[RMDB]
RNA sequence: GGGAACGACUCGAGUAGAGUCGAAAAGAUGUUGGUUUCUUUGAGGCUUUAGCACGAAUUCUCUCAUCCUCCUUGUUAAAUUUUUGUUAAAUUCACAAUAUUAUAUACCAUUAGCCCGGGCGCUGUUAAUCUAGAUUAAAUUCGUUUAAUCUAGAUUAAAAGAAACAACAACAACAAC
Reactivity to DMS in 0.01 (KOAc 150mM, MgCl2 10mM, bicine 150mM(pH8.5), 24C), signal-to-noise 3, nucleotides 027 to 126: g030a090u010g010u010u000g000g000u000u000u000c000u000u000u000g010a130g000g000c040u000u000u020a060g010c020a060c040g000a080a100u020u010c030u000c020u000c020a070u000c020c010u000c030c050u000u000g010u000u000a050a040a110u010u030u010u010u010g000u010u000a070a060a110u020u010c040a020c020a020a060u020a060u010u020a110u020a140u010a110c020c030a070u020u020a130g010c030c000c040g030g010g020c070g010c070u000g000u020u000
Reactivity to 2A3 in 0.01 (KOAc 150mM, MgCl2 10mM, bicine 150mM(pH8.5), 24C), signal-to-noise 4, nucleotides 027 to 126: g090a030u140g000u020u020g030g070u010u000u000c010u030u030u100g040a060g040g030c000u080u060u110a010g020c010a000c050g050a080a080u140u010c040u000c000u000c020a050u050c010c020u010c000c010u030u020g030u020u030a060a170a150u110u060u020u030u040g040u070u110a040a160a160u150u110c010a010c010a040a040u040a050u250u110a080u100a020u040a080c010c010a050u050u120a010g040c000c000c000g000g000g000c040g010c010u020g030u010u010

Record summary
An RNA of 177 nucleotides, treated with DMS and 2A3 and read out base by base. DMS (dimethyl sulfate) methylates the pairing face of unpaired adenines and cytosines. For 2A3, 1,908 sequencing reads were counted. The RNA was probed in 150 mM KOAc, 10 mM MgCl2 and 150 mM bicine (pH 8.5) at 24 C. It was measured as part of the RMDB libraries RFM100 and RFMREP. 2A3 adducts were read by reverse transcription with SuperScript II with manganese.